[RMDB]
RNA sequence: GGGAACGACUCGAGUAGAGUCGAAAAGAAGGACAUAACGCGAAGUAGCAGAGAGAAGACUGUAGUGACGCGAAUCACUAGACGUCAACGACGGCAAGAGAGAGCCGAAGGAGACGAUCCUUAGGAGCACCUCAGUAUAGUUCGCUAUACUGAGGUGAAAAGAAACAACAACAACAAC
Reactivity to 2A3 in 0.01 (KOAc 150mM, MgCl2 10mM, bicine 150mM(pH8.5), 24C), signal-to-noise 8, nucleotides 027 to 126: g090a030a010g050g050a040c050a110u200a110a020c080g000c030g050a100a010g030u110a040g030c020a000g040a010g030a000g030a200a030g050a030c030u070g020u110a050g030u040g050a010c010g020c020g100a060a040u040c010a030c070u010a020g030a040c010g010u000c010a010a020c010g040a000c000g000g020c020a150a010g100a020g020a020g010a010g120c010c000g020a000a010g010g010a010g000a000c020g080a150u060c010c020u050u080a030g050g000a010g030
Reactivity to DMS in 0.01 (KOAc 150mM, MgCl2 10mM, bicine 150mM(pH8.5), 24C), signal-to-noise 7, nucleotides 027 to 126: g020a120a060g000g020a070c090a040u020a100a070c100g000c070g010a050a160g010u020a100g000c020a030g010a060g020a090g010a120a130g010a070c050u010g010u000a060g010u010g010a160c040g010c090g010a120a160u000c120a040c050u000a050g000a080c040g000u000c000a030a250c050g000a280c010g010g000c010a060a090g010a140g010a170g000a140g010c010c000g020a030a180g010g000a290g000a050c050g010a070u010c020c020u010u020a080g010g000a110g000